[RMDB]
RNA sequence: GGGAACGACUCGAGUAGAGUCGAAAAGCUCACCGGUACGCCGGUGAGCAAAGACUGAGAUCGCAACAGUCAAAAGGAGAACAAAACUCCAAAUGCGAUCAAAGACUGAGCAUACGUGCUCAGUCAACCAAAAUCGUCCUUUCGAGGACGAUUUUGGAAAAGAAACAACAACAACAAC
Reactivity to DMS in 0.01 (KOAc 150mM, MgCl2 10mM, bicine 150mM(pH8.5), 24C), signal-to-noise 1, nucleotides 027 to 126: g000c000u000c000a000c000c040g000g020u010a090c270g080c020c020g000g000u000g020a000g070c000a000a060a070g000a070c000u000g000a190g040a000u000c020g000c000a030a050c010a000g000u020c000a180a100a180a120g020g000a000g010a050a150c290a060a130a120a150c010u000c000c000a030a000a160u000g000c000g010a000u000c080a080a170a210g000a000c030u040g000a030g000c000a000u000a090c150g080u020g000c000u000c000a000g000u000c020a010a080
Reactivity to 2A3 in 0.01 (KOAc 150mM, MgCl2 10mM, bicine 150mM(pH8.5), 24C), signal-to-noise 3, nucleotides 027 to 126: g000c010u000c000a000c000c000g010g010u070a080c300g020c080c000g000g000u000g000a000g000c000a000a000a000g000a000c020u010g010a000g020a060u010c000g000c020a050a180c040a160g050u040c030a020a030a090a050g020g000a010g020a100a060c080a170a080a060a000c010u000c000c000a030a040a030u010g000c010g000a000u020c000a000a030a010g000a000c000u000g000a000g000c000a000u020a090c260g170u050g000c000u000c000a000g000u000c000a000a000